[RMDB]
RNA sequence: GGGAACGACUCGAGUAGAGUCGAAAACUAGCACCUAUUCCAGACCCUUCCCCUGGUGAGUUGUAUUUUAAAUUAUUCAUGAAUUUACUCAACAAAUGGUUACUCAACAACUGCUUUGUGCCAGGCACCGUCUGUGUUAAUUCGUUAACACAGACGGAAAAGAAACAACAACAACAAC
Reactivity to DMS in 0.01 (KOAc 150mM, MgCl2 10mM, bicine 150mM(pH8.5), 24C), signal-to-noise 3, nucleotides 027 to 126: c090u000a080g010c070a090c050c040u010a160u000u010c040c010a100g000a170c050c020c020u010u010c010c010c000c030u000g010g000u000g010a090g010u000u010g000u000a070u010u000u000u010a030a040a070u000u000a160u010u000c090a120u000g010a040a020u000u000u000a050c100u000c050a090a080c070a080a060a080u000g010g000u000u000a060c060u000c090a050a080c100a070a070c050u000g000c100u000u010u010g010u000g010c040c020a070g000g030c110a150
Reactivity to 2A3 in 0.01 (KOAc 150mM, MgCl2 10mM, bicine 150mM(pH8.5), 24C), signal-to-noise 1, nucleotides 027 to 126: c010u030a000g000c020a040c010c030u070a110u000u100c010c050a070g110a180c060c000c030u010u000c020c000c000c000u040g010g020u010g060a010g010u000u080g040u080a110u080u080u080u130a050a140a020u160u060a000u010u300c070a090u060g040a030a020u110u110u040a090c040u050c040a100a010c010a000a110a020u090g060g000u070u050a010c020u040c080a060a060c000a010a120c050u060g060c000u020u120u040g050u020g020c000c020a000g010g030c020a000
Source: RMDB library OK2TST, as collected in RNAgym. An RNA of 177 nucleotides, treated with DMS and 2A3 and read out base by base. The reactions ran in a buffer of 150 mM KOAc, 10 mM MgCl2 and 150 mM bicine (pH 8.5), at 24 C.